Structure probing data (2A3 and DMS) for a 207-nucleotide construct. For DMS the reverse transcriptase was MarathonRT. The data come from the RNA Mapping Database (RMDB), library OK3TST. The DMS profile rests on 9,169 reads. Conditions: 150 mM KOAc, 10 mM MgCl2 and 150 mM bicine (pH 8.5), 24 C.
[RMDB]
RNA sequence: GGGAACGACUCGAGUAGAGUCGAAAAGAAACUGUCCAUGUUUAGAUCAUCAAUCUUGUAUUUCCGAUCUCUCCUUUUUUCAGGGUAAGUAGUGAGAGGUCAGCCUCUCUCUGCUAAGGAAGUAAUCCAGUCACCACGGUCAGCAGUUACACCCAGAAAAUCGUAUAUCAUUCGUGAUAUACGAUUUAAAAGAAACAACAACAACAAC
Reactivity to 2A3 in 0.01 (KOAc 150mM, MgCl2 10mM, bicine 150mM(pH8.5), 24C), signal-to-noise 8, nucleotides 027 to 156: g040a000a040a010c020u040g050u090c040c030a090u110g110u080u140u140a060g010a050u070c030a030u030c040a130a120u030c060u090u120g040u100a070u040u040u000c040c020g100a210u030c040u010c050u090c060c030u130u160u080u050u150u270c100a040g000g070g000u070a070a020g000u000a010g000u010g020a000g000a000g000g050u100c080a120g170c000c000u000c000u000c000u000c010u000g000c010u010a020a040g010g010a010a020g000u040a020a070u030c050c030a020g030u050c030a010c110c010a030c050g020g010u030c030a010g000c000a000g010u010u030a040c040a050c040c010c020a020g120a030
Reactivity to DMS in 0.01 (KOAc 150mM, MgCl2 10mM, bicine 150mM(pH8.5), 24C), signal-to-noise 4, nucleotides 027 to 156: g000a150a070a060c020u010g000u000c030c020a070u010g010u010u000u000a080g010a090u000c060a130u020c070a090a090u010c040u000u000g030u000a030u010u000u000c020c020g040a110u000c060u000c020u010c000c050u010u000u000u010u000u000c080a100g010g010g020u000a100a070g030u000a030g010u000g010a030g010a020g020g010u000c190a170g020c030c010u000c000u000c000u000c010u000g010c020u010a090a100g020g020a060a080g030u000a050a110u000c040c040a130g020u000c020a100c150c020a030c040g020g010u000c020a060g010c010a060g020u000u000a100c070a170c010c010c010a300g000a080